Description
Structure probing data (2A3 and DMS) for a 177-nucleotide construct. For 2A3, 13,994 sequencing reads were counted. The DMS profile rests on 8,352 reads. The RNA was probed in 150 mM KOAc, 10 mM MgCl2 and 150 mM bicine (pH 8.5) at 24 C. For 2A3 the reverse transcriptase was SuperScript II with manganese.
RNA sequence: GGGAACGACUCGAGUAGAGUCGAAAACUGCACGACGAUUGUGCAUACAUGUCCGUUGUGCACAUCGCAUAUGUAACUUUACAUACGAGGAUGUAGAUUCUGUCCAACGAUAUUAGGACUACAUCCAACUCUCUUACUACUUCGGUAGUAAGAGAGUAAAAGAAACAACAACAACAAC
Reactivity to 2A3 in 0.01 (KOAc 150mM, MgCl2 10mM, bicine 150mM(pH8.5), 24C), signal-to-noise 6, nucleotides 027 to 126: c040u090g000c050a020c040g090a000c010g030a040u060u170g000u030g030c010a000u070a060c020a050u130g080u050c100c040g020u040u020g010u010g000c000a000c000a020u010c010g000c030a020u000a020u080g030u010a090a050c050u040u110u100a010c010a010u040a010c030g050a060g020g000a000u010g010u000a020g060a210u030u000c010u030g030u010c040c060a120a020c130g030a080u050a070u120u200a040g000g000a000c000u000a000c000a000u000c000c000a000
Reactivity to DMS in 0.01 (KOAc 150mM, MgCl2 10mM, bicine 150mM(pH8.5), 24C), signal-to-noise 4, nucleotides 027 to 126: c090u000g020c140a070c080g010a110c040g000a020u000u020g020u000g000c050a030u000a050c080a070u040g000u040c120c090g000u020u020g050u000g030c010a000c090a050u000c010g000c080a210u010a040u000g010u000a030a170c180u030u020u000a020c070a020u010a050c180g000a150g010g020a000u000g010u000a010g000a150u000u000c010u000g000u030c040c100a100a140c280g010a100u030a050u040u030a030g000g000a010c010u000a000c000a010u000c000c010a130